An RNA of 207 nucleotides, treated with 2A3 and DMS and read out base by base. The data come from the RNA Mapping Database (RMDB), library M2RFOK. 2A3 adducts were read by reverse transcription with SuperScript II with manganese. The reactions ran in a buffer of 150 mM KOAc, 10 mM MgCl2 and 150 mM bicine (pH 8.5), at 24 C.
RNA sequence: GGGAACGACUCGAGUAGAGUCGAAAAAGCACGGUUUUUGAGGACGCAUUUUGUCCGAGCGGUAAUGCCCUCCUUUACACUUUCUCGCAUGGUGCGGGAGUGUGGAGAGGAAACAAAAGCUAGUCUCGAUAGGCGGUUAACUUCGGUUAACCGCCAACACAUUGAAAACGUUCGCGUUUUCAAUGUGAAAAGAAACAACAACAACAAC
Reactivity to 2A3 in 0.01 (KOAc 150mM, MgCl2 10mM, bicine 150mM(pH8.5), 24C), signal-to-noise 3, nucleotides 027 to 156: a000g050c030a030c020g000g000u010u010u010u030u020g060a070g010g010a020c030g040c110a160u010u010u030u080g020u010c000c000g010a000g040c030g020g110u150a050a050u150g020c000c000c010u040c000c010u040u090u040a020c010a010c000u060u130u060c010u020c020g000c030a130u280g300g020u300g160c010g010g000g000a020g000u010g000u000g000g000a060g010a010g010g020a030a010a000c000a000a000a000a000g070c020u050a040g010u010c020u010c130g060a140u150a100g010g010c010g000g030u000u000a000a000c000u050u050c140g000g000u000u000a000a000c010c000g000c000c000a000a000
Reactivity to DMS in 0.01 (KOAc 150mM, MgCl2 10mM, bicine 150mM(pH8.5), 24C), signal-to-noise 2, nucleotides 027 to 156: a110g030c050a120c040g020g000u000u000u000u010u010g000a120g030g000a040c000g020c160a190u000u000u000u030g010u000c000c000g000a070g010c010g010g010u000a080a080u000g010c000c020c000u010c040c020u000u000u010a040c010a030c010u000u010u000c010u010c020g000c050a300u000g020g030u000g010c000g010g000g010a000g010u000g000u020g000g010a040g020a070g030g010a030a010a070c010a020a040a100a250g020c020u000a170g020u000c000u000c050g000a130u000a050g040g030c010g040g020u000u000a000a010c010u000u000c300g020g010u010u000a010a010c000c000g000c010c010a000a040